The record gives the reactivity of an RNA of 207 nucleotides to 2A3 and DMS.
Source: RMDB library M2RFPK, as collected in RNAgym.
Values cover nucleotides 27 to 156.
For DMS, 3,544 sequencing reads were counted.
2A3 is a SHAPE reagent: it acylates the 2'-hydroxyl of flexible nucleotides of all four kinds.
The RNA was probed in 150 mM KOAc, 10 mM MgCl2 and 150 mM bicine (pH 8.5) at 24 C.
RNA sequence: GGGAACGACUCGAGUAGAGUCGAAAACGUGUCCGUCGGGGUAGCCGACAACAUGCCCAGGUAGCCCAGACCUUCAAGGCUACGGUGCGUUGCGACGCACGGUCUGAUUCUUCACAACGACGUUCACAAGAUCGGAUCACUUUCGAGUGAUCCGAAAAUCUAGAUUCCGUUUCGACGGAAUCUAGAUAAAAGAAACAACAACAACAAC
Reactivity to 2A3 in 0.01 (KOAc 150mM, MgCl2 10mM, bicine 150mM(pH8.5), 24C), signal-to-noise 4, nucleotides 027 to 156: c040g000u000g020u010c100c090g000u020c020g010g000g020g240u270a140g270c030c010g000a000c010a000a010c020a010u080g050c000c030c010a010g070g000u010a010g020c010c040c060a000g010a010c000c000u020u020c000a000a030g000g000c000u000a000c010g010g010u010g000c000g000u010u080g050c150g090a010c010g000c000a000c010g020g040u000c000u010g010a030u070u060c070u150u160c100a060c000a150a080c070g100a010c060g120u100u140c080a060c010a130a150g050a260u020c010g000g000a000u010c000a000c010u030u080u060c050g000a010g020u000g000a000u050c010c020g000a000a000a000
Reactivity to DMS in 0.01 (KOAc 150mM, MgCl2 10mM, bicine 150mM(pH8.5), 24C), signal-to-noise 2, nucleotides 027 to 156: c020g010u020g000u010c030c120g080u010c010g000g020g000g050u020a130g070c010c010g000a130c040a060a010c060a060u000g010c030c000c010a140g010g000u000a080g000c000c000c060a090g010a070c020c050u020u010c080a060a210g000g000c000u000a020c050g010g000u000g020c000g050u000u010g060c170g000a090c020g000c020a060c020g020g000u000c000u000g000a230u000u000c060u020u010c080a050c010a070a170c010g010a110c100g000u000u010c030a060c010a100a110g020a120u000c000g020g020a010u000c000a000c010u000u000u010c240g010a040g020u000g000a010u000c010c000g010a000a000a080